[RMDB]
RNA sequence: GGGAACGACUCGAGUAGAGUCGAAAAGAUAUGGAUCGAUGUGUUUGGCUUGGAUUUAUCGGAAACGAUUGUCAGCCACACACCGCUCGAUCCUAAGUCAAAACAAUAGACCUUCGGGUCUAUUGAACCUUUAGAGGGGGUUCGCCCCCUCUAAAGGAAAAGAAACAACAACAACAAC
Reactivity to DMS in 0.01 (KOAc 150mM, MgCl2 10mM, bicine 150mM(pH8.5), 24C), signal-to-noise 2, nucleotides 027 to 126: g000a050u010a300u000g000g000a020u000c000g000a000u000g010u000g000u010u000u000g010g020c000u010u000g030g010a020u010u000u010a010u000c000g010g010a110a160a190c010g000a030u000u010g020u000c010a050g000c000c020a010c050a010c010a000c010c020g030c010u000c010g010a000u000c000c000u000a010a090g010u000c020a120a090a100a230c000a010a010u000a000g000a010c000c010u000u030c250g030g020g000u010c000u000a000u010u000g000a110a100
Reactivity to 2A3 in 0.01 (KOAc 150mM, MgCl2 10mM, bicine 150mM(pH8.5), 24C), signal-to-noise 2, nucleotides 027 to 126: g040a020u080a040u190g000g000a000u010c000g000a030u300g010u010g000u030u010u000g020g000c040u100u200g210g010a080u300u300u240a030u050c020g020g000a100a050a060c030g000a000u010u030g020u010c000a010g020c010c000a000c000a010c010a000c000c000g010c020u000c000g000a000u050c000c000u010a110a010g030u010c030a000a070a000a120c000a010a010u000a000g000a000c000c000u060u070c300g140g040g000u000c010u010a010u000u000g010a030a010
The data come from the RNA Mapping Database (RMDB), library TTRDEL. Chemical mapping of a 177-nucleotide RNA with DMS and 2A3. The DMS profile rests on 1,414 reads. Reactivities are given for positions 27 through 126. DMS adducts were read by reverse transcription with MarathonRT.